This 177-nucleotide RNA was probed chemically with 2A3 and DMS.
The RNA was probed in 150 mM KOAc, 10 mM MgCl2 and 150 mM bicine (pH 8.5) at 24 C.
For DMS, 13,968 sequencing reads were counted.
The 2A3 profile rests on 6,150 reads.
Source: RMDB library OK1LIB, as collected in RNAgym.
High DMS reactivity at an A or C suggests that its Watson-Crick edge is free.
RNA sequence: GGGAACGACUCGAGUAGAGUCGAAAACCAGAAUACUGGAUCGAAGGAUAGGCGACUUCGAAACGCUUGGAAGCCUAUGAGUUGACAGGCCAAGCGUUUAGGCUUCGCGUGGUGAAAUAGGCACCAGGUAUGUUGAUUGAUUCGUCAAUCAACAUACAAAAGAAACAACAACAACAAC
Reactivity to 2A3 in 0.01 (KOAc 150mM, MgCl2 10mM, bicine 150mM(pH8.5), 24C), signal-to-noise 7, nucleotides 027 to 126: c010c000a010g090a120a180u260a120c050u100g040g030a050u050c020g040a080a030g110g050a130u140a110g140g010c020g010a040c030u030u000c020g030a030a000a000c000g000c010u010u010g030g030a140a040g040c000c000u040a100u120g120a060g190u190u160g090a040c040a020g030g000c000c000a000a010g000c000g000u000u000u010a010g000g000c000u020u040c040g010c010g080u030g000g010u030g020a020a070a120u080a050g040g000c000a010c000c000a010g000
Reactivity to DMS in 0.01 (KOAc 150mM, MgCl2 10mM, bicine 150mM(pH8.5), 24C), signal-to-noise 5, nucleotides 027 to 126: c000c000a120g010a140a070u030a080c050u000g010g000a110u010c000g010a080a040g000g000a080u020a050g010g010c040g010a080c030u000u010c020g000a050a030a020c000g010c010u000u000g010g010a100a060g010c010c000u010a070u020g010a140g030u010u040g010a130c170a050g000g010c000c000a000a010g010c000g010u000u020u010a060g000g010c050u000u000c050g030c090g010u000g000g000u000g030a080a070a120u000a060g000g010c020a060c020c030a070g000